[RMDB]
RNA sequence: GGGAACGACUCGAGUAGAGUCGAAAACAAGGCGGAUUCGUCCGCCUUGGGUGCGUAGGUGCGUAAUUUUAAUAGCUACGCUUAAUAAAUUUAAAUUACGCAAUGUGGGGGCUUUCGAGCCCCCAAAACUUACCCAUUGAUUCGUCAAUGGGUAAGUAAAAGAAACAACAACAACAAC
Reactivity to 2A3 in 0.01 (KOAc 150mM, MgCl2 10mM, bicine 150mM(pH8.5), 24C), signal-to-noise 1, nucleotides 027 to 126: c010a000a000g010g020c000g020g020a010u000u080c130g070u050c030c000g010c000c000u000u010g000g000g000u050g000c010g000u030a050g020g040u040g010c000g000u000a000a000u000u020u020u100a160a230u120a040g050c020u050a010c050g000c000u030u090a130a090u120a110a040a030u120u140u150a020a000a010u010u000a000c010g000c010a000a010u130g000u070g080g020g000g020g000c000u050u080u030c060g050a010g040c010c100c000c030c000a000a000a000
Reactivity to DMS in 0.01 (KOAc 150mM, MgCl2 10mM, bicine 150mM(pH8.5), 24C), signal-to-noise 3, nucleotides 027 to 126: c010a000a000g010g010c000g000g000a020u000u010c200g020u000c000c010g010c000c000u000u000g010g010g020u000g000c010g020u000a010g000g020u010g000c010g020u010a000a010u010u000u010u010a060a150u000a100g020c010u000a010c010g010c010u000u010a070a080u010a060a100a100u010u000u000a020a050a020u010u000a010c000g010c010a170a080u020g010u010g020g010g000g010g000c010u000u000u020c140g010a020g000c000c010c010c000c000a000a010a040
Structure probing data (2A3 and DMS) for a 177-nucleotide construct. DMS adducts were read by reverse transcription with MarathonRT. For DMS, 3,902 sequencing reads were counted. Source: RMDB library M2PK50, as collected in RNAgym. The RNA was probed in 150 mM KOAc, 10 mM MgCl2 and 150 mM bicine (pH 8.5) at 24 C.